[RMDB]
RNA sequence: GGGAACGACUCGAGUAGAGUCGAAAAGCACGGAGACAUGCACGGAAACGUAGACGGAGGCACCAUGUCGAACGUGGCUGUCCGAGGCCUCCGUAUUUGACUGGUAAUUCAGUCGUUAGGACAGCUACAGGGUCCAUUAUUUCGAUAAUGGACCCUGAAAAGAAACAACAACAACAAC
Reactivity to 2A3 in 0.01 (KOAc 150mM, MgCl2 10mM, bicine 150mM(pH8.5), 24C), signal-to-noise 3, nucleotides 027 to 126: g100c020a010c050g090g030a050g000a030c020a000u010g020c070a010c150g050g070a120a140a010c060g090u050a050g050a080c010g020g000a000g000g000c020a030c090c030a030u040g010u030c050g040a120a060c040g020u030g030g000c000u010g010u000c000c000g020a060g040g040c010c000u000c000c010g030u010a170u090u080u150g000a000c000u000g050g020u080a060a090u100u090c000a000g000u000c000g000u010u040a000g000g010a000c000a010g000c000u020a010
Reactivity to DMS in 0.01 (KOAc 150mM, MgCl2 10mM, bicine 150mM(pH8.5), 24C), signal-to-noise 3, nucleotides 027 to 126: g010c120a110c040g010g000a210g000a030c030a020u000g020c220a070c050g000g000a080a090a130c180g030u010a110g030a030c000g010g000a010g000g000c030a150c200c030a050u000g000u000c040g000a040a120c140g020u000g000g010c000u000g010u000c010c000g000a140g030g000c000c000u000c000c020g000u000a000u000u010u000g010a020c000u000g000g000u000a110a160u020u010c010a010g000u010c020g000u010u000a130g000g010a030c010a000g010c000u000a060
The data come from the RNA Mapping Database (RMDB), library OK2TRN. The record gives the reactivity of an RNA of 177 nucleotides to 2A3 and DMS. For 2A3 the reverse transcriptase was SuperScript II with manganese. The DMS profile rests on 3,014 reads. Values cover nucleotides 27 to 126.